Chemical mapping of a 207-nucleotide RNA with DMS and 2A3. The DMS profile rests on 2,308 reads. Values are in units of 0.01, from 0 to 300, in steps of 10. The 2A3 profile rests on 2,691 reads. It was measured as part of the RMDB library M2RFPK.

[RMDB]
RNA sequence: GGGAACGACUCGAGUAGAGUCGAAAACGUCCCCGUCGUACAGAAUGGUAACAUAUCUCUCCAAAUAUCUGAGCUUGGGUAUACGGGGAAACCCUACCCCUUGGGAAGAUUGGGUAUAUGGCUAAAUUACAUCGAUUGUACUUCGGUACAAUCGAAAGAAGCAUAAGAUCUUCGGAUCUUAUGCUUCAAAAGAAACAACAACAACAAC
Reactivity to DMS in 0.01 (KOAc 150mM, MgCl2 10mM, bicine 150mM(pH8.5), 24C), signal-to-noise 2, nucleotides 027 to 156: c030g010u000c000c000c050c060g000u020c050g000u010a130c040a100g030a100a080u030g000g030u010a070a080c030a070u020a070u000c050u000c050u010c070c040a030a170a120u000a050u020c010u000g010a300g030c030u000u000g000g040g040u010a090u000a030c130g030g000g030g010a110a040a120c050c000c020u000a070c020c000c000c020u000u010g000g060g000a300a060g000a050u000u010g010g000g040u000a050u000a050u000g000g020c030u000a040a050a080u010u020a100c120a150u010c040g010a010u000u000g030u000a010c030u000u010c290g040g060u000a010c010a010a020u000c000g010a000a040a070
Reactivity to 2A3 in 0.01 (KOAc 150mM, MgCl2 10mM, bicine 150mM(pH8.5), 24C), signal-to-noise 4, nucleotides 027 to 156: c040g090u020c030c010c010c000g130u110c030g020u090a120c090a120g110a160a170u150g050g040u090a150a030c000a010u060a060u030c090u020c030u040c090c010a100a130a130u210a060u070c010u020g030a030g060c020u050u030g030g000g000u060a070u030a180c100g000g000g010g010a030a010a040c010c000c000u000a010c000c000c000c020u010u020g000g000g010a020a030g010a020u040u050g020g000g010u020a010u010a000u030g050g000c040u090a100a110a110u190u140a070c050a100u050c000g000a000u000u010g000u000a000c000u010u010c090g000g010u000a000c000a000a000u000c000g000a010a010a000